The data come from the RNA Mapping Database (RMDB), library M2RFPK. An RNA of 207 nucleotides, treated with 2A3 and read out base by base. The RNA was probed in 150 mM KOAc, 10 mM MgCl2 and 150 mM bicine (pH 8.5) at 24 C. Reactivities are rounded to 0.1 and cut off at 0 and 3.
RNA sequence: GGGAACGACUCGAGUAGAGUCGAAAAUUAAUGAAGCAAAUCUCCAAACGCCAACGAUGAGCGUUUCGCAAUCGCCGCUUAAGGCUUUUGCCGAGGCUGCUUGAGCCUUGUAACCAAAGAAAAGCCGAAAACCCAAAUGUCUUCGGACAUUUGGGAACUACCAGUCACAGUUCGCUGUGACUGGUAGAAAAGAAACAACAACAACAAC
Reactivity to 2A3 in 0.01 (KOAc 150mM, MgCl2 10mM, bicine 150mM(pH8.5), 24C), signal-to-noise 1, nucleotides 027 to 156: u180u180a010a110u150g040a020a000g020c040a140a060a100u130c090u020c070c070a010a030a030c000g000c000c000a070a090c090g190a200u140g030a050g080c000g000u020u050u080c030g010c000a000a020u040c030g000c040c000g050c140u230u260a130a020g000g050c040u020u010u010u000g000c020c010g000a000g030g000c040u050g000c000u050u040g000a000g000c000c000u020u010g020u060a010a030c070c030a080a000a000g020a020a030a020a000g000c030c020g060a090a080a120a110c030c000c000a010a010a000u000g000u000c010u020u030c080g090g000a000c000a000u000u000u000g000g000g000a000a000